RNA sequence: GGGAACGACUCGAGUAGAGUCGAAAAAUUUCGCCUUACAAUUCACAGAAUGCUGUGUCUCGUUCAAUGCUGGGUCUUACCACUCAGACUGUUGAUUCCUCACAGGGUUCAGAAUACCAGUACGUUAUCACCGAGCAGUUCGCUGCUCGGAAAAGAAACAACAACAACAAC
Reactivity to DMS in 0.01 (KOAc 150mM, MgCl2 10mM, bicine 150mM(pH8.5), 24C), signal-to-noise 4, nucleotides 027 to 129: a160u020u040u000c070g000c050c010u000u000a060c000a100a060u010u020c030a060c240a000g020a140a030u030g020c030u040g030u010g020u010c080u000c220g010u000u020c040a030a020u020g040c050u060g000g000g000u030c030u030u060a140c210c200a050c010u000c030a070g020a060c130u060g000u030u000g020a070u070u010c050c090u000c110a010c030a010g000g000g030u020u000c040a090g000a040a050u030a000c180c130a050g010u090a080c110g030u060u030a040u050c070a010
Reactivity to 2A3 in 0.01 (KOAc 150mM, MgCl2 10mM, bicine 150mM(pH8.5), 24C), signal-to-noise 4, nucleotides 027 to 129: a000u090u070u090c050g060c020c000u010u010a040c060a030a060u020u080c010a020c020a050g050a070a030u170g090c000u000g020u000g020u050c030u030c150g060u050u000c010a020a000u040g000c000u010g000g000g000u000c020u020u070a050c020c020a000c000u030c000a010g030a180c030u080g040u040u020g000a090u080u070c030c010u000c010a000c010a000g040g000g000u030u040c010a000g040a040a040u020a070c040c030a000g060u020a030c040g010u020u020a100u090c020a030
Structure probing data (DMS and 2A3) for a 170-nucleotide construct. The DMS profile rests on 8,401 reads. 2A3 adducts were read by reverse transcription with SuperScript II with manganese.